[RMDB]
Source: RMDB library TTRDEL, as collected in RNAgym. An RNA of 177 nucleotides, treated with DMS and 2A3 and read out base by base. For 2A3 the reverse transcriptase was SuperScript II with manganese. The 2A3 profile rests on 5,260 reads.

RNA sequence: GGGAACGACUCGAGUAGAGUCGAAAAGAUAUGGAGGCUGCAUUGGGAGCAGGGUCGGAAACGACCCGCGAAGAACAAUGUUUGUAGCCUCCUAAGUCAAACGUCUAAUGCUUCGGCAUUAGACGAACCUACUUAAGCGGUUCGCCGCUUAAGUAGGAAAAGAAACAACAACAACAAC
Reactivity to DMS in 0.01 (KOAc 150mM, MgCl2 10mM, bicine 150mM(pH8.5), 24C), signal-to-noise 1, nucleotides 027 to 126: g010a000u000a130u010g010g000a020g000g000c000u000g010c000a040u000u020g010g010g010a190g000c040a080g020g010g050u000c000g020g000a030a020a060c000g000a000c000c000c010g010c000g010a090a150g000a120a170c190a060a080u010g030u000u000u010g000u000a010g010c000c000u000c000c000u000a000a030g020u000c010a080a080a190c020g000u000c000u000a020a000u000g020c000u000u000c240g000g000c000a000u000u000a000g010a020c010g000a030a040
Reactivity to 2A3 in 0.01 (KOAc 150mM, MgCl2 10mM, bicine 150mM(pH8.5), 24C), signal-to-noise 3, nucleotides 027 to 126: g010a010u020a010u070g000g010a000g000g000c010u010g000c020a050u090u260g250g130g010a120g080c200a300g020g010g000u000c020g020g000a060a030a030c000g000a000c000c030c010g000c010g030a100a030g070a080a070c130a150a290u290g070u060u060u080g050u020a000g000c000c000u000c000c000u000a010a000g010u000c030a040a080a100c020g010u000c000u020a010a000u010g000c020u040u090c190g140g000c010a000u000u010a000g000a000c000g000a000a000